[RMDB]
RNA sequence: GGGAACGACUCGAGUAGAGUCGAAAAAGUCUCGAUGAGGCUGGUCAACGUCUGUGUGAUCGUGUGGCUACAGCGCGCGCUGAGGUGGAGGCCAUACUAUGCGGAGACUGAAACAUGCAGAGGUUGCGACUGUGCGUGCCACGAUGCUUGCUGACCAGAGGAAUUAUCAGUUCGCUGAUAAUUCCUCAAAAGAAACAACAACAACAAC
Reactivity to DMS in 0.01 (KOAc 150mM, MgCl2 10mM, bicine 150mM(pH8.5), 24C), signal-to-noise 1, nucleotides 027 to 156: a040g020u000c010u000c020g010a160u000g000a050g000g020c050u000g030g030u010c020a110a050c040g000u010c010u050g000u000g040u000g010a100u000c080g000u010g000u000g010g020c010u010a130c070a050g010c080g030c050g020c090g000c040u000g030a130g040g000u010g000g020a260g000g000c000c010a090u000a050c050u010a090u010g000c030g020g060a170g000a080c050u000g000a240a070a060c040a070u000g050c000a070g000a170g030g020u000u010g050c040g030a090c040u010g010u030g000c090g030u000g000c040c010a020c080g000a130u020g050c030u010u010g010c060u000g000a090c010c030a300
Reactivity to 2A3 in 0.01 (KOAc 150mM, MgCl2 10mM, bicine 150mM(pH8.5), 24C), signal-to-noise 4, nucleotides 027 to 156: a000g010u010c020u020c020g100a180u200g000a030g020g010c050u020g000g020u050c030a070a030c050g090u010c090u040g140u070g010u040g130a100u190c050g010u020g010u010g080g000c030u080a040c020a020g020c040g010c020g000c020g000c100u050g030a060g020g060u120g030g070a050g040g000c010c010a040u080a090c040u060a040u170g130c060g030g030a030g030a060c010u040g030a030a040a020c030a040u150g000c030a010g020a010g080g060u180u170g040c040g030a080c040u030g050u100g070c060g030u030g020c030c000a050c030g020a010u060g000c020u010u090g000c010u040g010a010c010c000a020